[RMDB]
RNA sequence: GGGAACGACUCGAGUAGAGUCGAAAAUGCACACACUAAGUUUUCAACUUUACAGUGUGUGGGACAUAAGGGGAGCGUCUAUCUAAAUGGUGAUCUUUUGUAUCAGUUGGGUUAUGAUGCUACUGUUACUAAUGCAUCACUUGUAACAUGUACCACACUACACCAAUUAGUUCGCUAAUUGGUGUAGAAAAGAAACAACAACAACAAC
Reactivity to 2A3 in 0.01 (KOAc 150mM, MgCl2 10mM, bicine 150mM(pH8.5), 24C), signal-to-noise 7, nucleotides 027 to 156: u150g000c000a010c000a000c000a000c010u030a060a060g020u020u040u110u150c160a100a040c030u080u110u230a120c090a040g000u010g000u000g000u010g010g000g020a030c040a060u150a080a070g010g010g010g010a020g000c020g040u010c040u070a160u040c050u090a090a110a050u150g030g000u010g030a020u010c010u040u070u040u070g010u010a020u030c020a020g020u050u090g070g010g020u110u040a170u260g160a080u200g030c010u010a000c000u010g010u030u010a020c010u060a020a030u040g040c050a020u030c010a020c020u030u060g040u050a050a040c030a080u160g030u050a050c000c000a020c000a000
Reactivity to DMS in 0.01 (KOAc 150mM, MgCl2 10mM, bicine 150mM(pH8.5), 24C), signal-to-noise 5, nucleotides 027 to 156: u000g030c000a050c010a020c020a050c020u000a080a070g010u000u000u010u000c160a080a090c030u010u000u000a130c150a080g020u000g040u000g030u010g010g000g010a130c060a090u000a100a080g000g010g010g010a110g020c060g020u010c040u000a140u010c080u000a050a070a110u000g010g010u000g010a050u000c020u010u010u000u000g020u000a040u010c010a060g000u000u010g020g020g030u000u010a120u010g020a120u010g010c010u000a080c030u000g010u000u000a030c020u000a020a050u000g000c080a060u000c030a020c050u000u010g010u000a040a070c060a080u000g000u000a060c010c020a060c060a140
An RNA of 207 nucleotides, treated with 2A3 and DMS and read out base by base. It was measured as part of the RMDB library OK3TST. For 2A3, 6,633 sequencing reads were counted. The RNA was probed in 150 mM KOAc, 10 mM MgCl2 and 150 mM bicine (pH 8.5) at 24 C.